[RMDB]
RNA sequence: GGGAACGACUCGAGUAGAGUCGAAAAGUUUCAUGAAAUGUCGGCGUGACUUUAAAACUUUGUGCAUGUCCGCUUUUUGAAAUUAAUAAACCUCUGAUGAUGUGGAGGUGGGAUAGUGGUGCGCUAACAUAGUCCGGAAAUUCGUUUCCGGACUAUGAAAAGAAACAACAACAACAAC
Reactivity to 2A3 in 0.01 (KOAc 150mM, MgCl2 10mM, bicine 150mM(pH8.5), 24C), signal-to-noise 3, nucleotides 027 to 126: g010u000u020u000c050a040u130g030a030a080a040u120g130u230c020g000g000c000g020u010g040a140c000u100u120u200a080a120a080a080c060u160u110u180g170u240g080c010a000u000g080u080c000c000g010c000u000u000u010u000u040g010a010a000a000u070u080a030a070u190a120a020a030c010c000u010c020u070g160a110u100g030a060u080g140u140g100g040a050g000g020u070g000g010g000a060u110a080g060u040g030g050u070g010c040g000c030u030a100a030
Reactivity to DMS in 0.01 (KOAc 150mM, MgCl2 10mM, bicine 150mM(pH8.5), 24C), signal-to-noise 3, nucleotides 027 to 126: g000u000u000u000c000a020u040g010a030a030a010u020g000u040c010g000g010c050g040u000g010a050c060u010u050u060a040a090a090a140c210u040u010u010g000u060g020c000a030u000g010u060c010c010g010c020u000u000u010u000u000g000a020a020a020u010u000a090a140u030a060a080a060c020c010u000c030u000g000a120u030g010a120u020g010u020g000g000a070g000g010u000g010g000g010a080u010a040g000u000g000g020u000g010c120g000c060u010a060a210
Notes: Structure probing data (2A3 and DMS) for a 177-nucleotide construct. 2A3 is a SHAPE reagent: it acylates the 2'-hydroxyl of flexible nucleotides of all four kinds. Reactivities are given for positions 27 through 126. 2A3 adducts were read by reverse transcription with SuperScript II with manganese. Conditions: 150 mM KOAc, 10 mM MgCl2 and 150 mM bicine (pH 8.5), 24 C. The data come from the RNA Mapping Database (RMDB), library OK1LIB.